Structure probing data (DMS and 2A3) for a 207-nucleotide construct. For DMS the reverse transcriptase was MarathonRT.
RNA sequence: GGGAACGACUCGAGUAGAGUCGAAAAUCGCUUUCCACCUCUCAGGGAGCAGAUCAAACGGGUGAAGGACUCGGAUGACGUGCCCAUGGUGCUGGUGGGGAACAAGUGUGACCUGGCUGCACGCACUGUGGAAUCUCGGCAGGCUCAGGACCUCGCCGUUGCGUAUACUCUUCGGAGUAUACGCAACAAAAGAAACAACAACAACAAC
Reactivity to DMS in 0.01 (KOAc 150mM, MgCl2 10mM, bicine 150mM(pH8.5), 24C), signal-to-noise 2, nucleotides 027 to 156: u020c160g040c100u000u000u000c000c010a090c020c010u000c050u020c040a170g000g060g000a070g050c010a070g030a070u000c020a040a070a300c080g030g000g050u000g030a150a090g030g000a140c010u000c030g030g030a220u000g000a080c020g000u000g020c030c000c000a180u000g030g000u000g020c030u000g050g010u000g000g040g040g030a070a040c100a080a090g000u000g020u000g010a250c060c020u000g000g040c020u000g010c030a110c000g030c040a060c050u010g000u000g000g030a060a190u000c020u010c000g030g000c030a030g040g020c000u000c120a130g000g000a120c070c000u000c030g020c030c020
Reactivity to 2A3 in 0.01 (KOAc 150mM, MgCl2 10mM, bicine 150mM(pH8.5), 24C), signal-to-noise 3, nucleotides 027 to 156: u050c020g020c050u030u030u070c000c000a030c010c020u090c020u010c030a040g030g050g000a060g020c060a050g010a170u050c040a010a050a050c030g050g000g000u070g130a130a090g180g040a040c010u010c040g040g000a040u020g020a020c070g040u020g030c000c030c000a070u040g070g000u080g020c110u040g000g040u020g010g000g000g010a030a050c050a170a110g090u110g010u060g220a050c010c000u010g120g010c040u030g040c020a040c130g030c010a040c030u040g000u040g130g040a080a060u040c060u020c060g000g020c020a010g070g030c030u050c060a030g080g000a050c010c050u020c090g020c030c060

It was measured as part of the RMDB library OK3TST.